This 177-nucleotide RNA was probed chemically with DMS.

RNA sequence: GGGAACGACUCGAGUAGAGUCGAAAAACUGGCGCAGGCGAAUAAUGCAUUGCAACUGUUGCUGGGAAGCUACGGCAAGCUGCCGCAAGCGCAGACAGUAAACAGCGACAGCCUGCAAAGCGUUAAACACAAUGCUCCGUUUCGACGGAGCAUUGUGAAAAGAAACAACAACAACAAC
Reactivity to DMS in 0.01 (KOAc 150mM, MgCl2 10mM, bicine 150mM(pH8.5), 24C), signal-to-noise 2, nucleotides 027 to 126: a090c020u010g010g070c120g000c050a030g020g000c100g000a100a190u000a010a050u050g000c000a150u000u000g000c010a060a120c000u000g000u000u010g050c000u020g010g010g030a090a110g000c000u000a080c050g010g000c010a160a240g040c250u000g040c000c000g000c030a040a030g010c070g010c060a110g030a190c080a080g010u000a120a130a130c040a010g000c000g020a000c000a010g010c160c040u000g000c000a010a010a030g010c030g010u000u000a080a130a130